[RMDB]
RNA sequence: GGGAACGACUCGAGUAGAGUCGAAAAGGCGGCACAAAGGAACCGGAGAUGGUAGCGGACCGGAUCAUCUGCCACGCGAACGUGCGGCAGAAUGUGCUGUUCGCGAAGGCUAUUGCGGAGGGCGGGCGGAGCUAUCAGCGUUCGCGCUGAUAGCUCCAAAAGAAACAACAACAACAAC
Reactivity to 2A3 in 0.01 (KOAc 150mM, MgCl2 10mM, bicine 150mM(pH8.5), 24C), signal-to-noise 3, nucleotides 027 to 126: g070g000c000g000g000c070a010c040a080a130a030g130g020a040a010c000c010g020g000a050g000a050u120g000g100u030a030g040c010g010g000a020c000c020g010g020a060u070c050a010u020c010u070g000c010c000a010c000g010c000g010a220a100c130g040u090g030c020g050g040c050a010g080a130a080u110g010u040g010c040u040g020u020u010c040g000c020g060a050a020g050g000c040u050a070u080u150g000c020g030g080a090g030g010g110c120g000g020g010c000
Reactivity to DMS in 0.01 (KOAc 150mM, MgCl2 10mM, bicine 150mM(pH8.5), 24C), signal-to-noise 2, nucleotides 027 to 126: g000g020c050g000g000c030a050c090a120a030a080g050g040a110a140c030c000g000g000a050g000a050u000g030g030u010a100g000c040g000g010a100c000c080g000g010a040u000c040a090u020c070u000g000c020c000a140c000g030c000g030a060a040c220g030u010g030c060g010g000c080a070g030a050a040u000g010u000g000c000u010g000u000u020c000g040c120g000a070a080g000g000c020u010a080u010u010g000c100g040g000a100g020g010g020c160g010g000g000c150